[RMDB]
RNA sequence: GGGAACGACUCGAGUAGAGUCGAAAAUUGUUCAGCAUCUUCAGCUCUGAUGAAUGCGGUGUCAGUACAAAAUGAUGAGCUAGAGCCAGGGCAUGGUGGCUCAUGCCAAUAAUCCCAGUGCUUUGGGAGGCUGAGGCAGGAGAAUCUCCUGAGGCCACCGACGUUUUAAUUUCGAUUAAAACGUCGGAAAAGAAACAACAACAACAAC
Reactivity to 2A3 in 0.01 (KOAc 150mM, MgCl2 10mM, bicine 150mM(pH8.5), 24C), signal-to-noise 1, nucleotides 027 to 156: u130u010g060u110u030c010a010g050c010a040u050c080u100u060c000a000g020c000u020c030u080g020a040u080g040a130a050u100g070c040g050g000u010g080u040c060a040g030u100a070c070a080a090a060a080u100g090a080u070g010a010g010c000u060a040g060a010g080c100c060a060g000g040g000c000a010u040g000g010u020g010g020c010u010c150a040u010g000c010c000a080a040u140a080a010u000c010c000c000a040g020u090g100c000u070u120u000g030g000g000a040g000g000c010u010g040a060g000g120c010a000g000g040a060g030a050a090u020c010u000c050c000u010g020a050g050g000c000c030a040
An RNA of 207 nucleotides, treated with 2A3 and read out base by base.
The reactions ran in a buffer of 150 mM KOAc, 10 mM MgCl2 and 150 mM bicine (pH 8.5), at 24 C.
Reactivities are rounded to 0.1 and cut off at 0 and 3.
Values cover nucleotides 27 to 156.